[RMDB]
RNA sequence: GGGAACGACUCGAGUAGAGUCGAAAAGUAAGCACGUUCGCGUGCUUACAAAAAAACCUUUGUGUUAGACGGGAGCUGCGUAACCCAUUGGGUUACCGGCAGCGAAGAACGAGAACUAACACUCUGGUAAAAAGUGAUGGGAUUCGUCCCAUCACAACCCUCUAGAUCCGUUCGCGGAUCUAGAGGGAAAAGAAACAACAACAACAAC
Reactivity to 2A3 in 0.01 (KOAc 150mM, MgCl2 10mM, bicine 150mM(pH8.5), 24C), signal-to-noise 1, nucleotides 027 to 156: g000u030a000a000g020c010a000c000g030u070u220c300g060c010g070u010g000c000u000u010a000c000a000a000a000a000a000a000a110c000c030u000u000u000g060u030g010u000u030a020g060a040c020g050g000g030a060g020c000u010g020c030g020u000a000a000c000c050c090a240u200u300g000g000g000u010u010a030c000c120g180g000c000a000g000c010g010a120a010g000a000a000c030g000a030g050a150a010c000u010a000a000c000a000c000u000c000u010g000g000u090a140a160a020a020a020g000u000g010a000u020g000g020g020a010u000u090c230g090u020c040c000c000a000u000c000a000c000a000a010